The record gives the reactivity of an RNA of 170 nucleotides to 2A3 and DMS. Values cover nucleotides 27 to 129. For 2A3, 8,932 sequencing reads were counted. Conditions: 150 mM KOAc, 10 mM MgCl2 and 150 mM bicine (pH 8.5), 24 C. The data come from the RNA Mapping Database (RMDB), library 15KLIB.
RNA sequence: GGGAACGACUCGAGUAGAGUCGAAAACUUAUUAUUCCUCGGACGUUUCCCAGCCAGGGGUUAUCCUCCUCAAGUCUCUUGAUAGUCUUGUUGACCUUCCGGAGGUCCCUCUCGAGCUCCUCCUUUCGCACGUAGGCGUUCGCGCCUACGAAAAGAAACAACAACAACAAC
Reactivity to 2A3 in 0.01 (KOAc 150mM, MgCl2 10mM, bicine 150mM(pH8.5), 24C), signal-to-noise 5, nucleotides 027 to 129: c000u050u080a050u190u070a090u180u130c000c020u000c040g030g000a010c030g000u000u030u010c000c000c020a020g020c020c030a030g000g000g000g000u060u080a100u090c010c000u020c000c000u040c030a070a100g140u000c010u000c000u000u040g010a000u010a020g040u000c020u020u130g100u070u100g030a000c000c000u040u070c040c070g220g030a020g000g010u020c000c000c000u000c000u010c020g010a010g000c040u020c000c010u010c000c050u050u090u020c060g000c010a030
Reactivity to DMS in 0.01 (KOAc 150mM, MgCl2 10mM, bicine 150mM(pH8.5), 24C), signal-to-noise 3, nucleotides 027 to 129: c100u020u090a120u090u040a090u020u040c060c040u020c050g040g020a120c000g000u010u000u010c000c000c000a200g010c040c020a050g040g020g050g040u040u040a030u030c040c000u030c000c030u020c030a040a140g030u010c010u020c020u010u040g030a050u020a040g070u000c010u000u030g050u020u070g010a110c000c040u050u030c030c000g060g030a110g060g000u010c030c020c000u020c010u020c030g020a070g030c120u020c050c000u000c000c050u030u030u030c060g050c160a180